[RMDB]
RNA sequence: GGGAACGACUCGAGUAGAGUCGAAAAAGGGAUCCACCUGAUAACCCGGCUUUGCAAUGAAGAUGGUCGUCAGUUCACAAAGCUGGCCUGAUUGACCUGAAAUUCUAAACAGAGGACACAGAUUCACCCCAAACUAAACAUUCGUGUUUAGUUUGGGAAAAGAAACAACAACAACAAC
Reactivity to 2A3 in 0.01 (KOAc 150mM, MgCl2 10mM, bicine 150mM(pH8.5), 24C), signal-to-noise 2, nucleotides 027 to 126: a000g010g000g020a020u030c040c010a050c120c010u010g020a050u070a120a060c040c000c000g010g060c040u050u030u000g020c030a020a140u170g020a030a030g030a050u060g000g020u000c000g000u010c020a010g000u000u010c020a010c030a100a300a090g010c200u000g000g000c000c000u000g000a020u100u300g010a000c000c000u000g010a080a070a040u040u000c010u040a040a020a080c020a010g030a010g040g020a020c020a010c020a130g120a130u080u100c060a080c050
Reactivity to DMS in 0.01 (KOAc 150mM, MgCl2 10mM, bicine 150mM(pH8.5), 24C), signal-to-noise 4, nucleotides 027 to 126: a070g010g020g010a120u020c190c160a080c030c010u000g000a150u010a100a140c030c000c010g020g010c020u000u000u000g030c050a150a090u000g000a030a040g000a140u020g010g010u010c010g000u000c010a020g010u000u010c020a030c020a150a110a140g030c200u000g010g000c090c010u000g000a020u000u020g030a010c010c020u000g000a050a090a100u010u000c010u000a120a120a130c060a030g000a040g000g010a070c090a060c130a100g000a120u010u000c100a120c170